This 177-nucleotide RNA was probed chemically with DMS and 2A3. The RNA was probed in 150 mM KOAc, 10 mM MgCl2 and 150 mM bicine (pH 8.5) at 24 C. The DMS profile rests on 2,531 reads. Reactivities are given for positions 27 through 126. Source: RMDB library OK2TRN, as collected in RNAgym.
RNA sequence: GGGAACGACUCGAGUAGAGUCGAAAAUGAUGGUGGCAGAGCCAGCUCAUGGGCCUGGAAGUCUGGGAUAGAGGCAGGCUGGAGCCUUGGAGUGGGAGGCUGGGCCACACUGGUGCCCACACUGAGGGUGUGGUCCAGUUUUCGAACUGGACCACACAAAAGAAACAACAACAACAAC
Reactivity to DMS in 0.01 (KOAc 150mM, MgCl2 10mM, bicine 150mM(pH8.5), 24C), signal-to-noise 3, nucleotides 027 to 126: u000g010a130u000g030g010u000g010g030c030a080g000a060g000c020c010a150g010c020u010c030a150u000g000g020g020c020c000u000g030g020a120a070g010u010c010u000g010g020g030a190u010a100g010a130g020g020c000a020g010g040c010u000g010g000a130g010c050c000u010u010g020g000a050g030u000g000g000g010a110g000g010c010u000g020g010g020c010c010a010c040a030c020u000g000g030u030g010c040c040c030a110c130a090c130u000g000a130g010g000
Reactivity to 2A3 in 0.01 (KOAc 150mM, MgCl2 10mM, bicine 150mM(pH8.5), 24C), signal-to-noise 2, nucleotides 027 to 126: u160g100a050u100g070g020u020g030g070c010a010g000a010g120c010c000a010g020c010u020c040a070u050g030g000g050c010c030u030g120g110a080a040g040u010c020u020g080g100g070a160u140a290g120a100g040g090c030a010g050g000c040u020g020g080a100g010c000c030u030u090g200g010a040g020u050g000g060g070a070g020g000c040u020g040g030g010c000c010a010c010a010c010u030g150g000u100g020c030c030c000a030c000a010c020u100g100a110g040g160